[RMDB]
RNA sequence: GGGAACGACUCGAGUAGAGUCGAAAAGGCCAUGAGCAGGAUAUUCUGGGUGUUAUUAACGGUCAAUUUGACGGUGCAGUAACAUGGGCAUCAAUGAUCGGCGACUACAAUACCGGUUAUACCAGUGCUGUGUCAUACCGUUCGCGGUAUGACACAGAAAAGAAACAACAACAACAAC
Reactivity to 2A3 in 0.01 (KOAc 150mM, MgCl2 10mM, bicine 150mM(pH8.5), 24C), signal-to-noise 1, nucleotides 027 to 126: g030g000c050c000a080u110g010a010g090c020a030g040g030a040u000a030u150u050c020u090g010g070g000u040g010u050u060a100u060u080a060a030c060g090g030u040c060a050a230u070u120u120g030a040c040g090g020u010g050c040a030g010u030a030a010c020a070u060g020g020g020c000a020u050c030a010a140u110g030a050u020c010g070g010c020g080a070c040u110a030c100a080a010u000a130c000c040g000g020u030u020a080u040a030c000c010a020g010u050g100
Reactivity to DMS in 0.01 (KOAc 150mM, MgCl2 10mM, bicine 150mM(pH8.5), 24C), signal-to-noise 2, nucleotides 027 to 126: g040g000c000c040a040u000g040a110g000c020a070g000g010a110u000a050u000u000c040u010g020g030g020u000g000u020u010a030u000u010a110a100c050g030g000u000c010a060a150u000u000u000g000a030c100g020g030u000g010c150a080g010u000a020a090c110a030u000g000g010g010c090a030u020c090a130a010u030g000a040u000c040g010g030c080g000a110c120u000a100c280a060a130u010a080c040c050g010g000u000u010a050u030a160c040c060a040g030u000g000